The record gives the reactivity of an RNA of 177 nucleotides to 2A3. The reactions ran in a buffer of 150 mM KOAc, 10 mM MgCl2 and 150 mM bicine (pH 8.5), at 24 C. The data come from the RNA Mapping Database (RMDB), library TTRDES.
[RMDB]
RNA sequence: GGGAACGACUCGAGUAGAGUCGAAAAGAUAUGGAUCUCAUUGGGAGAUUUAUGUCGGAAACGACAUUGAUCGAAGAACAAUAGAUCCUAAGUCAAACGAACCCAUCGACUUCGGUCGAUGGGUUCGCUCCGUUCAUAGGUUCGCCUAUGAACGGAGAAAAGAAACAACAACAACAAC
Reactivity to 2A3 in 0.01 (KOAc 150mM, MgCl2 10mM, bicine 150mM(pH8.5), 24C), signal-to-noise 1, nucleotides 027 to 126: g000a010u020a000u030g000g020a000u000c030u060c110a040u120u000g060g050g010a160g000a030u030u000u010a010u000g010u010c020g020g000a000a010a000c010g010a010c000a000u010u040g000a010u030c010g180a300a040g000a000a060c000a000a020u000a040g000a010u030c000c000u000a020a020g000u000c040a060a090a160c050g000a010a010c060c020c020a030u020c000g030a010c000u080u130c300g170g000u050c050g000a020u020g000g070g010u000u010c000g010